[RMDB]
RNA sequence: GGGAACGACUCGAGUAGAGUCGAAAAGGGGUCUUUGACAUGGUCCCUGAUGGAGCAACAGCUAUACUGAAGCCUCCACGGUAUAGACAUGCUCCGGAUGGGACCAACAGCAAAGACGGAGGCACCCAAAACAUGUUUUAGUUCGCUAAAACAUGAACAUCACAAAGUAGUUCGCUACUUUGUGAUGAAAAGAAACAACAACAACAAC
Reactivity to DMS in 0.01 (KOAc 150mM, MgCl2 10mM, bicine 150mM(pH8.5), 24C), signal-to-noise 3, nucleotides 027 to 156: g020g010g020g030u010c000u000u010u000g020a070c020a300u000g040g050u000c010c000c000u010g000a300u000g000g000a020g030c010a100a130c080a200g000c000u000a030u000a030c010u000g000a040a160g000c040c050u000c000c050a300c040g000g020u000a020u000a050g000a080c040a300u000g020c000u000c000c010g040g000a240u000g010g010g010a020c000c000a010a000c080a120g020c010a000a020a050g000a050c040g000g020a010g070g050c020a130c020c000c020a070a080a100a240c000a010u010g000u000u020u000u000a030g010u020u010c280g000c000u000a010a000a020a010c010a010u000g000a090a220
Reactivity to 2A3 in 0.01 (KOAc 150mM, MgCl2 10mM, bicine 150mM(pH8.5), 24C), signal-to-noise 4, nucleotides 027 to 156: g020g000g030g040u010c030u020u010u010g100a130c110a190u300g000g000u000c000c000c000u000g010a010u030g010g000a000g000c070a080a120c050a200g010c030u000a000u010a010c000u020g070a120a040g010c000c020u000c000c010a020c000g010g000u010a000u010a010g050a060c100a240u300g000c000u000c000c000g010g000a000u010g000g000g000a010c030c000a030a000c000a000g000c000a000a010a000g000a000c000g000g010a010g000g000c010a050c010c000c000a030a110a020a010c010a000u010g010u010u000u000u000a020g010u040u050c200g030c210u010a000a000a000a000c000a000u010g000a010a010
Source: RMDB library RNAMAK, as collected in RNAgym. The record gives the reactivity of an RNA of 207 nucleotides to DMS and 2A3. The 2A3 profile rests on 5,948 reads. DMS adducts were read by reverse transcription with MarathonRT. For DMS, 4,233 sequencing reads were counted.